[RMDB]
RNA sequence: GGGAACGACUCGAGUAGAGUCGAAAAGCUAAGUAGUUCGCUACUUAGCAAAUAAAAUCAGCGGUUAAAAAGGAGGCGUUAUAACCGCUGAACGCCUCCAUAAAAGUGUGCGCUUCGGCGCACACAACUGAUAUUAUCCGUUCGCGGAUAAUAUCAGAAAAGAAACAACAACAACAAC
Reactivity to DMS in 0.01 (KOAc 150mM, MgCl2 10mM, bicine 150mM(pH8.5), 24C), signal-to-noise 2, nucleotides 027 to 126: g010c010u010a000a010g000u000a000g000u000u000c240g030c000u000a010c000u020u000a010g000c020a020a040a060u010a060a050a070a080u000c040a030g000c020g010g000u000u000a040a070a110a110a090g010g000a020g010g010c020g000u000u000a100u000a090a110c010c020g020c020u010g000a020a020c050g020c000c020u000c040c010a110u000a050a040a090a160g020u000g010u000g000c000g010c010u000u000c190g020g020c000g000c020a000c000a000c010a040a100
Reactivity to 2A3 in 0.01 (KOAc 150mM, MgCl2 10mM, bicine 150mM(pH8.5), 24C), signal-to-noise 2, nucleotides 027 to 126: g000c000u010a010a000g000u010a000g020u050u080c170g000c080u010a010c000u010u010a000g000c000a000a000a000u030a000a030a010a050u080c030a010g020c020g110g080u130u160a090a050a030a070a020g040g000a020g030g000c030g000u000u050a070u040a170a050c010c000g000c010u000g010a010a000c000g000c000c000u000c010c000a040u120a030a150a020a030g000u000g000u000g010c000g000c020u020u060c240g090g000c010g010c000a000c000a000c000a000a000